An RNA of 207 nucleotides, treated with 2A3 and DMS and read out base by base. For DMS the reverse transcriptase was MarathonRT. The 2A3 profile rests on 832 reads. The reactions ran in a buffer of 150 mM KOAc, 10 mM MgCl2 and 150 mM bicine (pH 8.5), at 24 C. Source: RMDB library M2RFPK, as collected in RNAgym.
RNA sequence: GGGAACGACUCGAGUAGAGUCGAAAAGCUAUUGUUGGAAUCACCGUACCUAUUUAGGUUUACGCUCCAAGAUCGGUGGAUAGCAGCCCUACCAAUAUCUAGGAGAACUGUGCUAUGUUUAGAAGAUUAAAUCGACGCAUCUUCGGAUGCGUCGAAACAUGUUAGACUUCUUCGGAAGUCUAACAUGAAAAGAAACAACAACAACAAC
Reactivity to 2A3 in 0.01 (KOAc 150mM, MgCl2 10mM, bicine 150mM(pH8.5), 24C), signal-to-noise 2, nucleotides 027 to 156: g030c020u050a060u080u150g130u190u210g090g070a100a080u190c010a010c010c030g000u060a020c030c000u090a180u250u280u240a020g000g010u050u050u130a010c030g000c010u000c010c010a020a010g020a050u010c020g020g030u020g000g070a030u040a010g040c050a010g010c010c000c000u040a060c020c040a070a070u010a020u120c030u040a000g000g020a000g000a040a070c090u050g060u010g100c060u110a100u190g050u080u160u050a080g010a130a030g020a110u170u190a080a090a110u010c000g000a000c010g000c000a000u010c000u050u040c070g000g000a000u000g000c000g010u000c010g000a000a000a000
Reactivity to DMS in 0.01 (KOAc 150mM, MgCl2 10mM, bicine 150mM(pH8.5), 24C), signal-to-noise 1, nucleotides 027 to 156: g030c000u000a060u000u000g010u010u020g020g030a160a100u010c020a100c030c030g010u000a010c030c010u000a200u000u000u000a040g010g000u000u050u000a050c110g000c060u000c020c060a070a130g040a080u000c060g000g000u000g020g000a070u000a110g030c110a190g000c060c020c000u000a120c010c030a070a110u010a080u000c070u000a140g020g010a190g000a060a050c030u000g020u010g020c090u000a090u010g040u000u000u000a100g010a110a140g010a150u000u000a020a080a100u000c000g020a060c030g040c000a010u000c000u010u010c300g040g000a000u000g030c000g000u000c000g030a010a020a070